[RMDB]
RNA sequence: GGGAACGACUCGAGUAGAGUCGAAAACAGUCUGACGGCGACUACCUGACUGUUGCCGAGCUUGUGCGCGACCUCAGAGCCGUCUACGGCAACUUGCCCAUCUAUCCACACCGGCAUUGGACCAACAUAAGUCCGUCAAAUUCGUUUGACGGACUUAAAAAGAAACAACAACAACAAC
Reactivity to DMS in 0.01 (KOAc 150mM, MgCl2 10mM, bicine 150mM(pH8.5), 24C), signal-to-noise 2, nucleotides 027 to 126: c170a060g010u000c010u000g000a060c050g000g000c030g010a050c050u000a160c030c020u000g040a240c080u050g010u000u000g010c000c010g010a070g000c050u010u010g010u010g040c070g000c010g000a040c020c020u010c030a050g000a160g020c010c010g020u000c040u030a080c120g010g010c040a050a070c090u010u000g010c010c010c010a100u000c090u010a060u010c050c060a070c070a080c060c020g000g010c090a140u000u000g010g010a120c070c020a110a090c140a170
Reactivity to 2A3 in 0.01 (KOAc 150mM, MgCl2 10mM, bicine 150mM(pH8.5), 24C), signal-to-noise 2, nucleotides 027 to 126: c010a010g010u000c020u060g020a020c010g010g020c020g060a050c020u070a060c010c040u090g020a060c060u140g020u040u000g000c000c020g030a030g020c040u250u240g070u170g030c040g000c030g060a050c000c050u070c060a020g010a040g020c000c030g010u000c020u050a040c050g010g000c010a050a030c050u030u100g030c010c000c000a030u020c030u080a120u010c010c010a010c030a020c040c050g020g000c050a040u000u110g040g030a050c030c030a020a080c030a110
The record gives the reactivity of an RNA of 177 nucleotides to DMS and 2A3. The reactions ran in a buffer of 150 mM KOAc, 10 mM MgCl2 and 150 mM bicine (pH 8.5), at 24 C. In probing experiments dimethyl sulfate is read out at A N1 and C N3, which are open when not base-paired. For DMS the reverse transcriptase was MarathonRT. For 2A3 the reverse transcriptase was SuperScript II with manganese.